[RMDB]
RNA sequence: GGGAACGACUCGAGUAGAGUCGAAAACGGUAUCGAUAUGGUGCUCCUGGGGGAGCUCAGGACCACCAGGUUGUCUAAGAAGAGGUGAACCGACCCAGGUCGGAGACGGAGCAGGUCAAAUCCCCUGUGCUGAUCAGUAGUGGGAUCGCACCUGUGACCAUAGCUCUAACUUCGGUUAGAGCUAUGGAAAAGAAACAACAACAACAAC
Reactivity to 2A3 in 0.01 (KOAc 150mM, MgCl2 10mM, bicine 150mM(pH8.5), 24C), signal-to-noise 1, nucleotides 027 to 156: c040g030g030u110a080u170c030g030a100u020a100u210g010g000u010g030c020u020c030c000u000g000g000g000g030g120a130g090c000u010c000a000g000g000a000c010c000a000c000c000a010g030g010u040u020g010u000c070u090a090a000g070a100a010g020a080g010g090u060g020a040a070c000c000g030a030c010c020c030a020g120g000u010c030g090g000a060g000a060c000g030g040a030g000c010a000g000g030u000c030a100a000a100u000c000c000c000c000u030g050u080g040c100u090g060a150u170c030a040g050u130a040g050u180g070g030g000a000u000c020g000c010a000c020c000u000g030u060g000a020
This 207-nucleotide RNA was probed chemically with 2A3. As a SHAPE reagent, 2A3 marks flexible, mostly unpaired nucleotides at the ribose 2'-OH. The reactions ran in a buffer of 150 mM KOAc, 10 mM MgCl2 and 150 mM bicine (pH 8.5), at 24 C.